[RMDB]
RNA sequence: GGGAACGACUCGAGUAGAGUCGAAAAUGGGUGUGGUUAUGCAGAGUGGUGUGAGAAAAGUUACAUAUGGUACUGCGCAUUGGUUGUUUGCGACCCUUGUCUCAACCUAUGUGAUAAUCUUACAAGCGAGGCUAUUGGUUCGCCAAUAGCAAAAGAAACAACAACAACAAC
Reactivity to DMS in 0.01 (KOAc 150mM, MgCl2 10mM, bicine 150mM(pH8.5), 24C), signal-to-noise 9, nucleotides 027 to 129: u070g000g010g030u030g030u000g000g030u030u040a000u040g020c070a030g000a090g040u040g010g020u010g000u020g000a030g000a020a040a080a140g020u020u010a010c030a000u030a020u070g000g000u040a050c180u000g000c300g020c020a020u000u000g000g010u020u000g020u030u040u030g030c080g030a060c030c030c030u000u020g020u020c030u000c040a060a050c040c030u000a020u000g020u000g010a040u030a060a260u010c050u010u000a020c040a110a130g020c110g020a070g030
Reactivity to 2A3 in 0.01 (KOAc 150mM, MgCl2 10mM, bicine 150mM(pH8.5), 24C), signal-to-noise 9, nucleotides 027 to 129: u110g010g010g010u050g010u030g020g050u100u070a050u130g040c050a010g030a040g090u100g060g030u030g010u020g020a010g020a010a070a040a060g010u030u030a010c010a010u040a040u230g010g000u060a100c050u060g010c030g000c030a010u010u020g020g010u010u020g050u120u140u210g090c050g010a010c000c010c000u020u060g070u040c040u010c050a070a160c010c000u000a020u010g010u000g010a010u040a120a050u020c020u010u030a010c020a030a020g070c050g070a040g090